[RMDB]
RNA sequence: GGGAACGACUCGAGUAGAGUCGAAAAAGCGUAGCGGUACGCCGCUACGCAAGGCGCAUUUGAACUGUAUUGUACGCCUUGCAUAAAGCAAAAGUACUAAGAAAACGUGCCGUUACGACGGCACGAAAAAACAUCCAUUGGUUCGCCAAUGGAUGAACUUUCGCUUUCUGUUCGCAGAAAGCGAAAGAAAAGAAACAACAACAACAAC
Reactivity to 2A3 in 0.01 (KOAc 150mM, MgCl2 10mM, bicine 150mM(pH8.5), 24C), signal-to-noise 2, nucleotides 027 to 156: a000g010c000g010u000a000g000c000g000g060u040a020c210g040c010c000g000c000u000a000c000g000c000a000a000g000g000c000g010c010a090u100u130u260g060a100a070c050u140g050u260a180u130u070g040u030a020c030g020c020c000u000u050g030c040a050u150a300a030a090g010c020a080a000a000a000g010u020a020c040u150a150a020g050a070a030a010a000c000g020u000g000c000c000g010u020u030a080c250g010a000c000g010g000c000a000c000g020a010a010a000a000a000a000c000a000u000c000c000a000u000u010g020g020u040u050c090g040c100c000a000a000u030g000g000a000u000g000a010a000
Chemical mapping of a 207-nucleotide RNA with 2A3. It was measured as part of the RMDB library M2RFPK. The RNA was probed in 150 mM KOAc, 10 mM MgCl2 and 150 mM bicine (pH 8.5) at 24 C. Reactivities are given for positions 27 through 156.